This 207-nucleotide RNA was probed chemically with DMS and 2A3.

RNA sequence: GGGAACGACUCGAGUAGAGUCGAAAAGCUCGGUUCGCCGAGCGCAAUCACCUUUGUGUACACUAGACCAACUACCCACCUAUAUAGUCUCCCAUUGGGAGACAGUAUAGAGGUUGGUCUUCUGUACACUCUGGUCUCUAGAGGAGUUCGCUCCUAACAUUCAUUUUAAAUUCGUUUAAAAUGAAUGAAAAGAAACAACAACAACAAC
Reactivity to DMS in 0.01 (KOAc 150mM, MgCl2 10mM, bicine 150mM(pH8.5), 24C), signal-to-noise 2, nucleotides 027 to 156: g010c010u000c000g010g000u000u000c270g040c030c000g000a020g060c000g050c120a020a100u000c040a090c020c020u000u000u000g010u000g000u000a000c010a020c010u010a010g020a010c020c000a010a030c010u000a020c010c010c030a300c140c000u020a010u000a020u000a180g050u000c000u000c000c000c000a300u000u000g050g020g020a000g020a010c000a040g020u000a010u000a010g010a130g050g030u000u000g020g010u010c030u000u000c000u000g030u000a030c030a030c010u000c020u000g000g020u000c010u000c040u000a060g020a250g020g000a040g010u010u000c010g040c010u000c000c000u010a030a260
Reactivity to 2A3 in 0.01 (KOAc 150mM, MgCl2 10mM, bicine 150mM(pH8.5), 24C), signal-to-noise 6, nucleotides 027 to 156: g000c000u010c000g010g030u070u110c280g060c090c000g010a010g000c010g000c040a030a140u130c040a020c020c000u010u010u000g010u000g000u000a000c000a000c010u010a010g010a000c000c000a010a000c000u070a090c080c090c050a050c010c030u000a010u000a000u010a040g010u000c010u020c000c040c060a300u180u300g010g000g000a000g000a000c000a000g000u000a000u000a000g020a010g000g000u000u000g000g000u000c010u000u000c000u000g000u000a000c000a000c000u000c000u000g000g030u020c000u000c000u020a110g030a180g030g100a000g030u200u070c020g010c010u000c000c000u020a050a030
For DMS the reverse transcriptase was MarathonRT. For DMS, 5,378 sequencing reads were counted.